The data come from the RNA Mapping Database (RMDB), library TTRDEL.
The record gives the reactivity of an RNA of 177 nucleotides to 2A3 and DMS.
2A3 adducts were read by reverse transcription with SuperScript II with manganese.
Conditions: 150 mM KOAc, 10 mM MgCl2 and 150 mM bicine (pH 8.5), 24 C.
The DMS profile rests on 10,427 reads.
For 2A3, 19,274 sequencing reads were counted.
2A3 is a SHAPE reagent: it acylates the 2'-hydroxyl of flexible nucleotides of all four kinds.

RNA sequence: GGGAACGACUCGAGUAGAGUCGAAAAGAUAUGGAAUGUGUGAGGCUAUUCAGGCGUUGAAAUCGGAAACGAUGGAGCCUGAUAGUCGAACACAUUCCUAAGUCAAACUUUACCUUCGGGUAAAGAAGAUACUAUAACACUUCGGUGUUAUAGUAUCAAAAGAAACAACAACAACAAC
Reactivity to 2A3 in 0.01 (KOAc 150mM, MgCl2 10mM, bicine 150mM(pH8.5), 24C), signal-to-noise 3, nucleotides 027 to 126: g020a010u070a030u160g010g010a000a000u000g010u000g000u000g010a020g010g010c000u020a030u270u300c030a010g010g000c020g270u300u070g000a030a030a000u010c000g010g030a080a050a020c000g000a010u010g010g010a010g010c000c010u000g010a000u000a000g000u000c000g000a000a000c000a000c000a000u000u000c000c000u000a020a010g000u000c010a040a060a090c000u000u000u020a010c010c000u030u070c300g120g000g000u000a000a010a000g000a030a020
Reactivity to DMS in 0.01 (KOAc 150mM, MgCl2 10mM, bicine 150mM(pH8.5), 24C), signal-to-noise 7, nucleotides 027 to 126: g010a040u010a300u000g010g010a000a000u000g010u000g010u000g000a270g000g010c000u000a010u010u000c010a000g010g010c000g020u000u000g000a090a110a020u000c000g000g000a130a080a210c000g010a030u000g000g000a130g000c000c000u010g000a010u000a000g000u000c000g000a160a010c000a000c000a000u000u000c000c000u000a010a060g010u000c030a140a100a200c010u000u000u000a000c000c000u000u010c220g020g000g010u000a000a000a010g010a130a100